[RMDB]
RNA sequence: GGGAACGACUCGAGUAGAGUCGAAAAGCGUACUACUGCGGGAAAGUAGCUCAACAGCCUACUUAGUAGCCUAUCCCAAAUAGGAUAGGCGAACUGUAGGACAUGAGCUAUAACACGCAGUAUCGCAAAGAGAGCUGUUGUUCGCAACAGCUCUCAAGUAAAUUAUUGAGUUCGCUCAAUAAUUUACAAAAGAAACAACAACAACAAC
Reactivity to DMS in 0.01 (KOAc 150mM, MgCl2 10mM, bicine 150mM(pH8.5), 24C), signal-to-noise 2, nucleotides 027 to 156: g020c020g000u000a060c070u000a020c000u000g030c000g020g020g020a090a140a240g030u000a000g000c030u030c000a080a120c140a230g020c020c000u000a000c010u000u000a150g020u000a300g010c000c000u000a000u000c010c000c020a030a210a280u020a050g020g010a000u000a000g000g000c000g000a010a040c220u010g000u000a010g000g000a020c090a270u000g000a040g010c010u010a010u000a060a300c030a110c020g000c000a020g010u000a000u000c010g000c020a070a070a150g000a010g000a030g020c010u000g010u010u000g020u000u020c220g030c000a050a010c020a040g020c010u000c000u000c000a010a120
Reactivity to 2A3 in 0.01 (KOAc 150mM, MgCl2 10mM, bicine 150mM(pH8.5), 24C), signal-to-noise 6, nucleotides 027 to 156: g020c000g030u050a020c050u000a000c000u020g000c000g000g010g030a020a150a100g030u010a000g000c000u000c010a090a180c060a110g060c000c010u000a000c000u020u000a000g000u000a000g010c000c000u000a010u010c000c010c050a180a270a130u300a070g000g000a000u000a000g010g010c000g000a000a000c010u010g010u000a000g000g010a010c000a130u020g000a000g010c000u000a000u020a020a030c050a000c000g000c000a000g000u000a010u030c000g000c000a010a080a010g000a000g000a000g000c000u000g010u020u010g020u080u140c300g000c140a000a000c000a000g000c010u000c000u000c000a000a000
Source: RMDB library RNAMAK, as collected in RNAgym. An RNA of 207 nucleotides, treated with DMS and 2A3 and read out base by base. DMS (dimethyl sulfate) methylates the pairing face of unpaired adenines and cytosines. The 2A3 profile rests on 8,541 reads.